[RMDB]
RNA sequence: GGGAACGACUCGAGUAGAGUCGAAAAUAGCACGUCGUUUUGGUGACCUUUUUCUCUUCCCUUACUUUGCUGCUCCUGGGUUGGGUUGAGUUUUUGAGCAGCUUUGGUCACCUUUUCGACGUGCGAAGGCUAACCAUUGCUUCGGCAAUGGUUAGCCAAAAGAAACAACAACAACAAC
Reactivity to 2A3 in 0.01 (KOAc 150mM, MgCl2 10mM, bicine 150mM(pH8.5), 24C), signal-to-noise 1, nucleotides 027 to 126: u080a010g000c000a000c000g000u000c000g010u000u000u000u000g020g000u000g020a000c010c000u040u100u000u040u010c010u010c000u020u050c000c000c000u050u050a150c130u090u110u120g020c000u010g010c000u020c020c040u180g170g020g000u110u100g040g020g000u010u000g030a030g020u070u090u000u040u130g000a000g000c030a010g030c000u030u030u020g000g000u000c000a000c000c000u000u000u000u000c010g000a000c000g010u000g000c010g000a000a000